[RMDB]
RNA sequence: GGGAACGACUCGAGUAGAGUCGAAAAUACGUCGCGUGCGACCGCACGCAAAGAUUAUUGUUGCGGGCUCGUCGGCCGAAUAUGGAUUUGUUGACCCAUCCGAGGUUCCGAUUAAUGAGCGGCGAGAGUGCCGGUCAUAAUUCGUUAUGACCGGCACAAAAGAAACAACAACAACAAC
Reactivity to DMS in 0.01 (KOAc 150mM, MgCl2 10mM, bicine 150mM(pH8.5), 24C), signal-to-noise 1, nucleotides 027 to 126: u000a080c160g030u000c090g000c020g080u000g030c040g020a080c090c150g000c010a000c110g000c040a030a040a100g000a140u010u000a120u000u010g010u000u010g000c020g000g000g000c010u000c050g000u000c020g030g010c020c010g020a130a160u000a010u000g000g000a020u000u000u020g000u030u030g000a090c070c030c010a020u000c030c030g010a300g000g000u000u010c070c020g000a120u000u010a030a090u020g000a090g010c010g010g000c010g010a110g020a100